Structure probing data (DMS and 2A3) for a 177-nucleotide construct. Values are in units of 0.01, from 0 to 300, in steps of 10.
RNA sequence: GGGAACGACUCGAGUAGAGUCGAAAAUAGGGGUGAAAGGCCUAUCAAACCCGGAGAUAUCUCGUUCUCCCCGAAAUAGCUUUAGGGCUAGCGUCGCGCGUUAACCCCGGGAGGUAGAGCACCGGAUUACCGAAGGAAAAUUCGUUUUCCUUCGGUAAAAAGAAACAACAACAACAAC
Reactivity to DMS in 0.01 (KOAc 150mM, MgCl2 10mM, bicine 150mM(pH8.5), 24C), signal-to-noise 5, nucleotides 027 to 126: u020a100g010g000g020g020u010g000a100a120a130g000g010c030c010u010a030u000c080a080a120a120c010c000c010g010g020a060g010a100u010a040u010c080u020c030g010u010u010c080u000c010c010c040c050g030a050a060a080u010a040g000c030u000u000u030a120g020g010g000c010u000a010g000c090g010u000c080g010c090g010c070g010u010u000a100a120c030c020c010c010g000g000g010a080g010g010u000a020g000a140g020c060a080c040c010g000g000a220u020
Reactivity to 2A3 in 0.01 (KOAc 150mM, MgCl2 10mM, bicine 150mM(pH8.5), 24C), signal-to-noise 7, nucleotides 027 to 126: u150a030g010g030g020g020u090g090a100a070a040g080g020c030c010u040a060u040c040a040a120a110c000c000c020g050g000a050g010a030u170a080u070c060u020c030g040u100u000c030u020c020c010c000c020g020a030a060a070u090a020g000c030u070u070u160a140g030g020g010c010u020a020g030c010g070u050c060g020c010g010c030g050u070u100a060a060c000c000c010c010g010g010g000a040g010g020u070a020g010a020g040c010a020c010c000g000g030a000u000